The record gives the reactivity of an RNA of 177 nucleotides to 2A3 and DMS. For 2A3, 1,267 sequencing reads were counted. Conditions: 150 mM KOAc, 10 mM MgCl2 and 150 mM bicine (pH 8.5), 24 C. 2A3 adducts were read by reverse transcription with SuperScript II with manganese. Source: RMDB library M2PK90, as collected in RNAgym. The DMS profile rests on 1,131 reads. In probing experiments dimethyl sulfate is read out at A N1 and C N3, which are open when not base-paired. Values are in units of 0.01, from 0 to 300, in steps of 10.

RNA sequence: GGGAACGACUCGAGUAGAGUCGAAAAAGAAAGGAUACCGAAAGGUAUCCAAUUUGCACAUUGGAUUGCGGUAACCUCUCACGUGUGACGUUGAAGUAACUAUGUGCAGUAAUACCGCAAGUAAAAAGUCUUUGAAUUGGUUCGCCAAUUCAAAGACAAAAGAAACAACAACAACAAC
Reactivity to 2A3 in 0.01 (KOAc 150mM, MgCl2 10mM, bicine 150mM(pH8.5), 24C), signal-to-noise 1, nucleotides 027 to 126: a000g080a020a050a000g020g010a000u000a030c010c020g040a020a050a050g000g000u000a030u000c000c000a000a010u000u010u030g000c000a000c000a000u050u050g150g100a120u120u090g050c000g000g000u010a000a010c010c000u000c000u000c010a030c000g070u250g180u210g180a050c070g030u040u060g060a100a000g020u020a040a000c020u030a010u040g010u020g000c020a000g060u020a000a060u040a050c000c000g000c050a030a030g040u130a020a050a050a050a000
Reactivity to DMS in 0.01 (KOAc 150mM, MgCl2 10mM, bicine 150mM(pH8.5), 24C), signal-to-noise 1, nucleotides 027 to 126: a140g010a060a120a210g000g000a020u000a000c010c000g000a130a060a100g020g000u000a030u000c000c000a010a050u000u000u000g020c050a010c030a060u010u020g020g000a160u020u000g020c030g000g000u010a040a030c080c020u000c020u000c010a040c010g010u010g000u020g000a050c020g020u000u000g000a070a080g000u010a050a070c030u000a010u000g010u010g000c080a030g000u000a030a080u000a020c020c000g010c020a050a050g000u000a040a020a070a040a120